[RMDB]
RNA sequence: GGGAACGACUCGAGUAGAGUCGAAAAAGGGCUGUUCGACUCCACGCGGAAAUGUCGAAGGAUGAUGUCCACCACGCCGUGCUGUCACGUUCUCGGUACCCUCGAUUUCCGUCUCUUCUUGCAUGCGCCUCUUUUAACGGUUCGCCGUUAAAAGAGGAAAAGAAACAACAACAACAAC
Reactivity to 2A3 in 0.01 (KOAc 150mM, MgCl2 10mM, bicine 150mM(pH8.5), 24C), signal-to-noise 2, nucleotides 027 to 126: a020g060g000g000c050u060g030u050u050c030g010a040c030u000c000c010a050c100g090c050g050g050a100a100a060u180g060u100c030g010a020a020g010g050a050u160g000a020u120g000u060c020c000a000c000c020a040c060g030c050c040g030u040g020c020u040g050u080c010a020c080g000u090u000c020u000c000g070g010u110a090c000c010c000u030c000g090a150u040u030u000c020c020g030u000c030u050c000u070u000c040u040u030g000c010a070u080g070c010g030
Reactivity to DMS in 0.01 (KOAc 150mM, MgCl2 10mM, bicine 150mM(pH8.5), 24C), signal-to-noise 1, nucleotides 027 to 126: a040g010g000g020c030u010g000u010u000c020g000a040c040u000c040c030a070c130g000c070g000g010a040a120a110u000g010u000c020g010a110a090g000g000a050u010g010a100u000g010u010c020c020a110c080c040a050c100g050c060c030g000u000g020c100u030g000u000c020a130c060g000u000u000c000u000c050g010g020u000a080c070c000c000u000c060g000a120u000u010u010c060c010g040u010c030u010c080u000u000c040u010u000g040c060a080u010g030c110g000
An RNA of 177 nucleotides, treated with 2A3 and DMS and read out base by base.
For DMS the reverse transcriptase was MarathonRT.
The reactions ran in a buffer of 150 mM KOAc, 10 mM MgCl2 and 150 mM bicine (pH 8.5), at 24 C.
For 2A3 the reverse transcriptase was SuperScript II with manganese.